[RMDB]
RNA sequence: GGGAACGACUCGAGUAGAGUCGAAAACAGAAGGAUUAGAUGUUGAAUACCUGAUUAUUGGUUUGAAGGCAAAAGAGAGAGAAAUCAAACGGCAUGGUCGAUUCUUUAGCCUGAUGUCGUGGGCCUACCCAUGCAUUUAUUUCGAUAAAUGCAUGGGAAAAGAAACAACAACAACAAC
Reactivity to DMS in 0.01 (KOAc 150mM, MgCl2 10mM, bicine 150mM(pH8.5), 24C), signal-to-noise 6, nucleotides 027 to 126: c070a100g000a140a070g010g010a080u000u000a060g020a080u000g000u000u000g010a130a090u000a080c040c020u000g010a100u000u000a110u010u000g000g010u000u010u010g010a140a080g010g010c040a050a050a070a040g010a060g010a110g010a100g000a070a040a060u000c060a030a050a100c110g000g000c060a060u000g020g010u000c030g000a120u000u000c040u000u000u000a130g000c020c020u010g000a090u000g010u000c050g020u000g010g000g000c050c050u000a150
Reactivity to 2A3 in 0.01 (KOAc 150mM, MgCl2 10mM, bicine 150mM(pH8.5), 24C), signal-to-noise 4, nucleotides 027 to 126: c030a020g110a100a020g070g040a030u060u130a060g070a130u130g050u120u100g050a080a040u060a150c000c010u030g030a160u050u190a110u140u100g020g030u060u050u120g070a040a010g010g000c030a040a010a110a010g060a010g000a000g000a000g040a040a070a050u050c020a070a060a060c040g030g000c040a050u050g070g010u060c030g060a080u130u070c030u050u090u090a040g000c010c010u020g020a030u030g020u030c010g000u040g000g030g020c000c000u010a050
The data come from the RNA Mapping Database (RMDB), library OK2TST.
Structure probing data (DMS and 2A3) for a 177-nucleotide construct.
Values cover nucleotides 27 to 126.
The reactions ran in a buffer of 150 mM KOAc, 10 mM MgCl2 and 150 mM bicine (pH 8.5), at 24 C.
For DMS the reverse transcriptase was MarathonRT.